[RMDB]
RNA sequence: GGGAACGACUCGAGUAGAGUCGAAAAGCACCUCCGUUACGACGGAGGUGCAACAUCGGUGCUACGGCACCGAUGAAACGUGGUGCAUACGUUAAUGCAUAAAGAUGCCGAGUACGCUCGGCAUCAAGAUUUAGUAAUGGUUCGCCAUUACUAAAUCAAAAGAAACAACAACAACAAC
Reactivity to DMS in 0.01 (KOAc 150mM, MgCl2 10mM, bicine 150mM(pH8.5), 24C), signal-to-noise 3, nucleotides 027 to 126: g020c000a000c000c000u010c010c000g020u000u000a120c170g020a060c020g000g000a010g000g030u000g030c010a010a030c010a000u000c020g010g010u000g020c000u000a130c210g050g010c000a000c010c010g010a000u000g010a070a080a300c020g000u000g010g030u000g010c000a020u000a050c000g010u020u030a010a000u000g000c000a020u000a090a080a090g010a000u000g010c010c000g000a010g010u020a100c240g030c000u000c000g000g000c010a000u000c010a030a050
Reactivity to 2A3 in 0.01 (KOAc 150mM, MgCl2 10mM, bicine 150mM(pH8.5), 24C), signal-to-noise 9, nucleotides 027 to 126: g010c000a000c000c000u000c010c010g020u030u060a100c300g020a000c000g130g010a000g000g000u000g000c000a000a000c000a000u000c000g000g000u000g000c010u040a120c260g130g000c000a000c000c000g000a000u000g000a020a010a000c020g010u050g080g000u000g060c000a000u010a010c010g120u100u110a020a000u010g010c010a000u060a030a130a020g000a000u000g000c000c000g000a000g010u030a040c250g030c090u000c000g000g000c000a000u000c000a000a000